[RMDB]
RNA sequence: GGGAACGACUCGAGUAGAGUCGAAAAGGGCUUGUUCGUGGCGGUCUUGCUGGUCUGUGAGGUAAUGUCCCAAGUCAGUCAUGAUUUCCUCGUCAUGUUCAGCUUGGCGCGUAGUUCGGCAAUGUGACGUAUUGGGUAAUUUCGAUUACCCAAUACGAAAAGAAACAACAACAACAAC
Reactivity to DMS in 0.01 (KOAc 150mM, MgCl2 10mM, bicine 150mM(pH8.5), 24C), signal-to-noise 9, nucleotides 027 to 126: g010g000g000c050u010u000g020u000u000c050g030u000g010g020c050g010g020u000c030u000u000g020c040u000g000g010u000c040u000g010u000g010a070g010g000u010a080a100u000g010u000c100c010c010a070a060g010u000c060a080g010u000c090a030u000g000a050u000u000u010c040c030u000c080g000u010c020a020u000g020u010u000c070a150g010c020u000u000g010g010c090g020c060g010u000a070g000u000u000c030g000g010c040a070a060u010g000u010g010a210
Reactivity to 2A3 in 0.01 (KOAc 150mM, MgCl2 10mM, bicine 150mM(pH8.5), 24C), signal-to-noise 8, nucleotides 027 to 126: g030g010g020c040u090u100g040u110u100c040g040u050g040g030c030g000g020u020c010u020u040g020c020u030g010g040u030c010u040g090u060g050a070g040g040u100a110a090u150g080u100c020c010c010a020a010g060u070c060a000g030u030c010a050u020g030a040u050u060u090c010c030u050c020g030u030c010a030u070g020u070u060c030a010g010c020u030u060g030g010c030g000c010g070u040a030g040u040u040c010g010g000c040a030a070u150g030u080g080a040